[RMDB]
RNA sequence: GGGAACGACUCGAGUAGAGUCGAAAAUCAGAGCAGCCAGGCAAGUGAGGGGUCUAAAGCACCAGCUUGGGAAGCGUCACUGCGUGGAGAGCGGGCUCCUGGGCUCAUCGCCCGAGGCACCCGACACAGUCAGGGUUAUAUUCGUAUAACCCUGACUAAAAGAAACAACAACAACAAC
Reactivity to DMS in 0.01 (KOAc 150mM, MgCl2 10mM, bicine 150mM(pH8.5), 24C), signal-to-noise 7, nucleotides 027 to 126: u010c070a120g000a130g020c100a110g010c000c030a040g000g020c040a040a070g010u000g010a070g010g010g000g010u010c040u010a080a060a070g020c030a120c240c210a140g000c020u000u000g010g010g010a050a070g010c030g000u000c040a040c020u000g000c020g010u000g010g000a070g000a140g020c020g000g010g010c080u010c000c020u010g000g000g010c000u010c300a100u010c270g000c000c010c000g000a020g010g010c090a090c000c000c000g000a070c130a100c160
Reactivity to 2A3 in 0.01 (KOAc 150mM, MgCl2 10mM, bicine 150mM(pH8.5), 24C), signal-to-noise 4, nucleotides 027 to 126: u080c020a020g040a020g120c050a010g040c030c000a050g060g000c030a120a140g010u040g020a040g010g060g050g000u000c030u100a160a020a000g010c020a050c130c050a040g030c000u040u020g050g020g020a050a010g050c030g140u040c020a010c040u040g010c050g070u020g010g030a150g000a030g060c020g010g000g000c010u010c010c020u030g000g000g010c020u050c070a120u110c100g010c000c000c000g020a020g000g010c030a020c020c020c000g060a040c030a000c010
The record gives the reactivity of an RNA of 177 nucleotides to DMS and 2A3. The RNA was probed in 150 mM KOAc, 10 mM MgCl2 and 150 mM bicine (pH 8.5) at 24 C. The data come from the RNA Mapping Database (RMDB), library OK2TST. The DMS profile rests on 8,116 reads.